Structure probing data (2A3 and DMS) for a 207-nucleotide construct. Source: RMDB library OK3TST, as collected in RNAgym. For DMS the reverse transcriptase was MarathonRT. The 2A3 profile rests on 911 reads.
[RMDB]
RNA sequence: GGGAACGACUCGAGUAGAGUCGAAAAUCAUCUGCGAUGGGAAUGGUAACGGAACGUUCAUCUGGGCCUCCGGUGUAUUCUAGCAGUCCGAGGUUGUACUUGUUGAUGUAGAUGUGUCCAUCCUUAAAGGUGUUCUCUUCGACGGUGUCGAUAUCGACGUCUUAUGUAGGUUCGCCUACAUAAGACGAAAAGAAACAACAACAACAAC
Reactivity to 2A3 in 0.01 (KOAc 150mM, MgCl2 10mM, bicine 150mM(pH8.5), 24C), signal-to-noise 2, nucleotides 027 to 156: u070c000a000u010c020u040g070c060g070a060u170g000g030g080a040a180u010g050g000u070a090a000c070g030g010a120a000c020g060u120u090c020a060u040c060u070g010g010g010c000c000u130c170c030g000g000u030g010u030a130u240u180c110u120a060g020c000a000g080u040c010c040g030a020g000g000u040u020g130u150a090c020u080u160g050u040u060g080a030u010g040u130a070g050a180u070g040u010g030u110c010c010a070u050c000c000u080u100a080a080a060g000g000u060g020u080u010c030u000c000u080u100c010g010a020c020g040g160u170g040u060c030g000a030u040a030u210c020g020a010
Reactivity to DMS in 0.01 (KOAc 150mM, MgCl2 10mM, bicine 150mM(pH8.5), 24C), signal-to-noise 1, nucleotides 027 to 156: u010c010a060u000c000u000g020c080g010a160u000g020g040g000a030a060u010g020g000u000a140a080c070g000g010a080a090c070g000u000u000c050a110u000c020u020g010g000g010c040c020u000c040c000g010g020u000g000u000a090u010u020c070u000a060g010c080a070g030u000c040c020g040a050g020g030u020u000g040u010a100c100u000u000g020u000u000g010a090u010g040u010a060g000a150u010g020u000g030u000c010c010a070u000c020c000u030u000a070a080a040g020g000u000g000u000u010c040u000c040u020u000c060g010a070c120g020g030u010g010u010c030g010a100u010a060u010c040g010a280